[RMDB]
RNA sequence: GGGAACGACUCGAGUAGAGUCGAAAAGUUCAUAGUGCUUUGGCUUCGAAUUCCAGCUCUACGCUAUGUUUUUGGUUUCCAUUGGCCCACGGCAACACAUCAUUCGAGCUGACCAUCAACUACACCAAAUCUCUCGAGCGUUCGCGCUCGAGAGAUUAAAAGAAACAACAACAACAAC
Reactivity to 2A3 in 0.01 (KOAc 150mM, MgCl2 10mM, bicine 150mM(pH8.5), 24C), signal-to-noise 2, nucleotides 027 to 126: g030u010u040c090a070u080a010g080u090g130c240u140u020u130g040g000c020u100u020c120g130a150a250u130u060c030c040a000g000c000u030c040u020a040c010g000c010u020a040u050g060u030u010u000u020u180g120g010u080u010u020c020c020a060u040u140g060g010c020c020c030a040c050g070g030c010a080a010c110a000c020a110u090c000a010u000u140c010g100a020g050c020u040g000a030c000c000a020u010c000a000a030c140u010a010c000a050c010c120a050
The record gives the reactivity of an RNA of 177 nucleotides to 2A3. The reactions ran in a buffer of 150 mM KOAc, 10 mM MgCl2 and 150 mM bicine (pH 8.5), at 24 C. Source: RMDB library OK1LIB, as collected in RNAgym.